[RMDB]
RNA sequence: GGGAACGACUCGAGUAGAGUCGAAAAUAAUCAAGAUGAAUCGUUUUUAGUUUGCUUGCUUACCUUACGGGCCAGCAUGAGAUCGACUUGAAUCUUUUUAUGUAGGCAGACAGCGACGGAAUUUAAACAUUUAGUCCACUUUCGAGUGGACUAAAUGAAAAGAAACAACAACAACAAC
Reactivity to DMS in 0.01 (KOAc 150mM, MgCl2 10mM, bicine 150mM(pH8.5), 24C), signal-to-noise 4, nucleotides 027 to 126: u020a040a130u030c100a080a060g000a040u020g010a120a050u020c050g010u000u010u000u010u020a100g020u000u000u000g030c020u000u010g030c030u000u010a130c070c020u000u020a050c110g030g000g040c060c070a110g010c050a030u000g000a070g010a040u000c040g010a140c130u010u010g000a030a080u020c010u000u010u000u000u050a040u020g010u010a020g000g010c010a040g000a020c040a080g020c090g000a030c050g000g010a100a090u010u020u020a080a090a160
Reactivity to 2A3 in 0.01 (KOAc 150mM, MgCl2 10mM, bicine 150mM(pH8.5), 24C), signal-to-noise 4, nucleotides 027 to 126: u140a000a070u110c050a020a020g030a090u180g120a050a110u070c050g060u010u020u010u050u110a070g020u040u050u070g000c010u000u000g000c020u050u050a080c020c000u040u180a030c100g000g000g020c010c020a000g010c010a040u040g010a020g000a020u020c010g030a050c040u050u070g000a030a030u020c000u000u110u040u020u010a120u130g090u050a010g000g000c010a010g020a090c010a000g010c000g010a000c020g060g040a020a030u100u170u160a130a150a020
Chemical mapping of a 177-nucleotide RNA with DMS and 2A3. It was measured as part of the RMDB library OK1LIB. The 2A3 profile rests on 3,451 reads. The DMS profile rests on 7,479 reads. The reactions ran in a buffer of 150 mM KOAc, 10 mM MgCl2 and 150 mM bicine (pH 8.5), at 24 C. DMS adducts were read by reverse transcription with MarathonRT. Values are in units of 0.01, from 0 to 300, in steps of 10.